[RMDB]
RNA sequence: GGGAACGACUCGAGUAGAGUCGAAAAUUGGGCUCAGAUAGGAGAAGAAACUUUCCUAAGGUCAUAUGUUAAGUGGAAGAAGUGAGCUUCAAGUCCUAUUCAGAUUUAACUGCCUCCAAAGCCAUGCUAUUUUCAUUAAUAAAAAUACCAAUAUUGACCACUAAUAGCUGUUCGCAGCUAUUAGUGGAAAAGAAACAACAACAACAAC
Reactivity to 2A3 in 0.01 (KOAc 150mM, MgCl2 10mM, bicine 150mM(pH8.5), 24C), signal-to-noise 2, nucleotides 027 to 156: u090u040g010g020g000c030u060c040a050g060a060u060a080g080g000a040g030a130a030g040a050a170a020c010u000u060u050c000c000u030a100a030g030g000u050c000a000u070a010u230g050u030u160a170a030g040u100g090g030a030a120g030a050a030g150u050g060a060g090c000u000u000c040a040a000g020u000c000c000u060a090u020u080c020a010g070a140u070u130u090a110a050c000u080g000c000c010u050c020c010a060a020a000g080c000c000a040u130g080c060u200a120u300u050u060u110c030a010u210u240a120a090u160a090a120a040a000a030u110a160c000c010a040a030u060a070u190u150g060a080
Conditions: 150 mM KOAc, 10 mM MgCl2 and 150 mM bicine (pH 8.5), 24 C. The record gives the reactivity of an RNA of 207 nucleotides to 2A3. It was measured as part of the RMDB library OK3TST. 2A3 adducts were read by reverse transcription with SuperScript II with manganese.